[RMDB]
Structure probing data (DMS and 2A3) for a 207-nucleotide construct.
For 2A3 the reverse transcriptase was SuperScript II with manganese.
RNA sequence: GGGAACGACUCGAGUAGAGUCGAAAAACCGGAGGCCGACAAUCCAGGGAACCGGAUGUCAUCACGUUGUUGCAGUACCAGAUGGCAUCUUAAAUUCGAUCUGCAAAUAAGCAUGUAGAAAGCUGAUAAAAUCACACACACUUCGGUGUGUGUGAAACAUCUUACCACAGUUCGCUGUGGUAAGAUGAAAAGAAACAACAACAACAAC
Reactivity to DMS in 0.01 (KOAc 150mM, MgCl2 10mM, bicine 150mM(pH8.5), 24C), signal-to-noise 2, nucleotides 027 to 156: a110c040c010g010g010a120g080g000c040c020g010a110c050a110a090u000c030c020a040g010g020g020a090a140c090c060g030g000a020u000g030u010c000a020u000c020a230c190g040u000u000g010u000u000g030c010a100g000u000a050c060c050a140g000a020u000g010g030c020a010u000c010u020u000a020a060a110u000u000c080g010a090u000c040u000g000c020a050a110a100u010a070a130g000c030a090u000g030u000a100g000a030a050a130g050c030u010g020a120u000a050a070a140a130u000c000a000c000a010c000a020c000a020c010u000u010c300g040g000u000g000u000g070u020g000u010g000a000a070a130
Reactivity to 2A3 in 0.01 (KOAc 150mM, MgCl2 10mM, bicine 150mM(pH8.5), 24C), signal-to-noise 2, nucleotides 027 to 156: a000c020c010g020g030a070g020g050c050c020g020a100c110a050a070u020c030c050a030g050g050g000a040a040c060c020g000g000a000u000g010u000c000a000u000c000a020c200g060u070u030g030u020u020g020c040a050g040u070a080c020c030a040g000a010u010g000g000c000a000u000c000u030u080a040a120a070u200u100c030g020a040u020c010u040g000c000a010a040a090u080a080a010g030c040a030u130g020u060a030g080a100a110a000g010c030u050g070a000u160a040a150a000a050u020c000a000c000a000c000a000c000a000c010u090u120c250g020g000u000g010u000g000u010g000u000g000a010a000a010